[RMDB]
RNA sequence: GGGAACGACUCGAGUAGAGUCGAAAAGAAAGUAAUCCGCGGCAGCGACAGGGCGCACUCGGUGAAUUAAAUGCAGCGGAAACAGAGCCAUGAGUACGAGUGUAUCUAAAUGACUAUUGUGAUUGGACUCCGUUUUAAAUUUCGAUUUAAAACGGAGAAAAGAAACAACAACAACAAC
Reactivity to 2A3 in 0.01 (KOAc 150mM, MgCl2 10mM, bicine 150mM(pH8.5), 24C), signal-to-noise 2, nucleotides 027 to 126: g030a000a020a000g060u100a060a070u000c030c000g040c000g060g030c030a000g010c010g080a050c050a120g080g040g070c020g000c020a010c010u020c020g000g140u090g050a050a050u090u070a080a060a060u110g000c000a000g010c010g000g000a030a060a000c070a020g070a010g020c010c010a020u050g010a050g300u030a020c020g010a020g070u060g000u030a010u030c010u060a020a130a150u130g040a020c020u090a120u180u170g060u040g060a110u060u040g000g010a020
Reactivity to DMS in 0.01 (KOAc 150mM, MgCl2 10mM, bicine 150mM(pH8.5), 24C), signal-to-noise 4, nucleotides 027 to 126: g010a130a100a150g010u010a110a090u000c020c010g020c020g010g020c020a120g010c090g000a110c120a070g030g010g020c090g020c020a040c020u000c030g010g010u010g010a100a110u010u010a040a060a140u000g000c030a020g010c020g010g000a060a090a100c100a080g000a100g000c010c020a040u000g000a140g020u010a040c050g000a030g010u000g030u000a070u000c060u000a040a070a060u010g010a070c090u010a070u000u010g010u000g000a170u020u000g010g010a300
This 177-nucleotide RNA was probed chemically with 2A3 and DMS. DMS (dimethyl sulfate) methylates the pairing face of unpaired adenines and cytosines.